[RMDB]
RNA sequence: GGGAACGACUCGAGUAGAGUCGAAAAGAAGAUGAUGUGUAGGAUAGGUGGGAGGCUUUGAAGUGUGGUCGCCAGUCUGCAUGGAGCCGACCUUGAAAUACCACCCUUUAAUGAAAAACAAAUACAACAUUUGGAUGAGAUUCGUCUCAUCCAAAUGAAAAGAAACAACAACAACAAC
Reactivity to DMS in 0.01 (KOAc 150mM, MgCl2 10mM, bicine 150mM(pH8.5), 24C), signal-to-noise 3, nucleotides 027 to 126: g010a080a050g010a070u000g020a040u000g010u000g020u000a050g010g000a090u000a040g000g060u000g000g010g020a130g010g010c030u000u000u000g010a110a060g010u000g020u000g010g010u000c050g000c160c190a050g010u010c010u000g000c020a060u010g010g010a080g000c010c030g000a110c130c040u000u000g000a070a060a090u000a060c020c010a010c000c020c020u000u010u000a040a120u000g000a040a070a060a050a080c150a050a070a040u010a060c170a060a150
Structure probing data (DMS) for a 177-nucleotide construct. The data come from the RNA Mapping Database (RMDB), library M2PK90. DMS adducts were read by reverse transcription with MarathonRT.